[RMDB]
RNA sequence: GGGAACGACUCGAGUAGAGUCGAAAAUUCAUAGCCAGGCAGGGGGGACAGUGUAUGCAAGAGUUAAUUUGGAGUUCUUGCCAGCUGUAGCCAGCUGAAUCAGUAGCUGGGUAAAUUGCUGCACUCCCAUCAACCCGCAGUUCGCUGCGGGUUGAUGAAAAGAAACAACAACAACAAC
Reactivity to DMS in 0.01 (KOAc 150mM, MgCl2 10mM, bicine 150mM(pH8.5), 24C), signal-to-noise 2, nucleotides 027 to 126: u030u000c040a120u050a110g000c030c090a090g020g000c060a110g000g020g000g000g000g010a040c110a040g000u030g000u030a040u040g010c050a050a000g000a050g000u000u000a050a130u020u010u020g010g000a060g020u020u000c020u000u030g000c060c000a040g060c040u010g000u020a090g000c030c000a010g000c000u000g020a170a080u010c300a140g040u050a020g000c000u000g000g010g000u010a000a020a070u040u010g010c010u000g010c050a080c000u020c010c010
Reactivity to 2A3 in 0.01 (KOAc 150mM, MgCl2 10mM, bicine 150mM(pH8.5), 24C), signal-to-noise 2, nucleotides 027 to 126: u000u030c010a020u120a070g000c000c000a010g090g010c000a000g040g000g000g000g000g000a000c000a040g010u000g010u050a010u090g050c010a020a010g030a010g120u170u080a050a170u270u070u120g110g040a110g010u000u050c030u050u100g060c050c000a030g000c000u020g000u020a020g080c000c000a000g010c000u020g030a250a230u280c100a100g180u130a000g030c000u030g050g030g000u050a140a240a020u200u070g040c000u000g050c000a020c000u000c000c000